[RMDB]
RNA sequence: GGGAACGACUCGAGUAGAGUCGAAAACCUCACCCGCGUCGGAGACGCGGGGAAGAGCGCAAGAGCAUACGGAAGUCUGACAGUGUCCGGCCUAACGACGGACGCUGACGCGAAAGCGUGGUCUAGCUCUCAAAGUUAUAUUCGUAUAACUUUGAGAAAAAGAAACAACAACAACAAC
Reactivity to 2A3 in 0.01 (KOAc 150mM, MgCl2 10mM, bicine 150mM(pH8.5), 24C), signal-to-noise 9, nucleotides 027 to 126: c000c000u020c060a030c000c000c000g000c010g010u010c090g220g160a270g000a100c000g000c000g010g000g000g000a080a020g030a010g000c070g000c050a090a040g030a020g070c030a040u080a140c040g060g060a080a050g070u060c070u100g060a050c010a000g000u000g000u000c000c000g030g050c020c040u200a190a060c100g060a000c000g020g000a000c000g000c000u000g000a020c010g020c010g040a090a020a010g020c010g000u010g020g000u020c040u050a020g020c010
Reactivity to DMS in 0.01 (KOAc 150mM, MgCl2 10mM, bicine 150mM(pH8.5), 24C), signal-to-noise 9, nucleotides 027 to 126: c010c000u010c060a230c010c000c010g020c010g020u010c030g020g010a220g020a040c010g030c010g010g000g000g000a040a050g010a070g010c090g020c070a090a050g010a150g010c040a080u010a080c070g010g010a260a110g000u000c060u010g010a160c010a000g010u000g010u000c000c000g010g000c070c070u020a110a110c230g010a040c010g000g000a020c000g010c000u000g000a040c060g000c020g010a090a130a120g010c010g010u000g010g000u010c010u000a060g010c200
The record gives the reactivity of an RNA of 177 nucleotides to 2A3 and DMS. The reactions ran in a buffer of 150 mM KOAc, 10 mM MgCl2 and 150 mM bicine (pH 8.5), at 24 C. Source: RMDB libraries RFM100 and RFMREP, as collected in RNAgym. DMS adducts were read by reverse transcription with MarathonRT.